The record gives the reactivity of an RNA of 177 nucleotides to DMS and 2A3.
Reactivities are rounded to 0.1 and cut off at 0 and 3.

[RMDB]
RNA sequence: GGGAACGACUCGAGUAGAGUCGAAAAGGUGCUCUUUAUUUGAGCGUCGACGCAUGUUUCCCUACGGUGCAGAGACAGAUCACCGAUAUAAGGUGAGAAUGUAGGGUACUCGUGCCGUCAUGCGGAAGGGAUGGAUUAGCUUCGGUUAGUCCAUCCCAAAAGAAACAACAACAACAAC
Reactivity to DMS in 0.01 (KOAc 150mM, MgCl2 10mM, bicine 150mM(pH8.5), 24C), signal-to-noise 9, nucleotides 027 to 126: g000g020u000g000c000u000c000u000u040u060a120u040u030u010g000a010g000c000g010u000c000g010a170c020g000c010a010u000g000u000u000u000c000c000c000u000a020c010g000g020u000g010c010a080g020a050g010a070c010a080g000a210u000c000a010c010c000g010a160u060a090u040a150a180g000g010u000g000a010g010a160a100u020g020u020a120g010g010g020u020a140c010u000c020g010u000g010c010c000g000u000c010a010u000g010c000g000g010a180a140
Reactivity to 2A3 in 0.01 (KOAc 150mM, MgCl2 10mM, bicine 150mM(pH8.5), 24C), signal-to-noise 9, nucleotides 027 to 126: g000g000u010g000c000u010c030u050u270u180a300u180u200u160g000a000g000c000g010u010c000g000a030c000g000c000a000u000g000u000u010u010c000c000c000u000a000c000g000g000u010g010c060a080g030a010g030a040c010a010g050a040u010c000a000c000c000g010a010u050a040u080a290a060g000g000u020g020a010g080a200a050u150g040u160a080g080g100g040u070a130c010u010c010g010u010g000c000c000g000u000c000a000u000g000c010g000g010a100a130